Conditions: 150 mM KOAc, 10 mM MgCl2 and 150 mM bicine (pH 8.5), 24 C.
Chemical mapping of a 177-nucleotide RNA with DMS and 2A3.
High DMS reactivity at an A or C suggests that its Watson-Crick edge is free.
The 2A3 profile rests on 3,493 reads.

[RMDB]
RNA sequence: GGGAACGACUCGAGUAGAGUCGAAAAGAUAUGGAGGCGUCUUGGACCAUACUGCAUCGGAAACGAUGUUAUGCUAGACGCUCCUAAGUCAAAUCCGAUUGGACAAGUUCGCUUGUCCAAUCGGAAAGGUUUCUAUUCAGUUCGCUGAAUAGAAACCAAAAGAAACAACAACAACAAC
Reactivity to DMS in 0.01 (KOAc 150mM, MgCl2 10mM, bicine 150mM(pH8.5), 24C), signal-to-noise 3, nucleotides 027 to 126: g000a020u000a300u010g000g030a020g020g010c020g020u000c000u000u000g040g010a110c300c010a010u000a020c300u010g010c000a010u000c000g000g000a100a070a200c010g000a010u000g020u000u010a020u000g030c040u000a020g000a020c010g010c000u000c000c010u010a050a150g020u000c030a080a130a190u010c000c010g000a010u000u000g000g000a010c000a000a010g010u000u010c290g040c010u030u000g010u000c000c000a000a000u000c010g020g000a010a010a040
Reactivity to 2A3 in 0.01 (KOAc 150mM, MgCl2 10mM, bicine 150mM(pH8.5), 24C), signal-to-noise 2, nucleotides 027 to 126: g030a030u100a060u190g050g020a070g220g290c040g000u020c050u060u140g070g100a140c070c040a020u040a050c160u190g010c000a000u000c000g010g040a100a060a010c010g010a000u000g010u070u070a030u010g000c000u000a000g010a010c000g000c000u000c000c000u040a130a030g030u010c030a080a020a120u000c010c000g010a000u000u000g010g010a000c000a000a000g030u060u160c180g160c240u010u020g000u000c000c000a000a010u010c000g000g000a000a000a010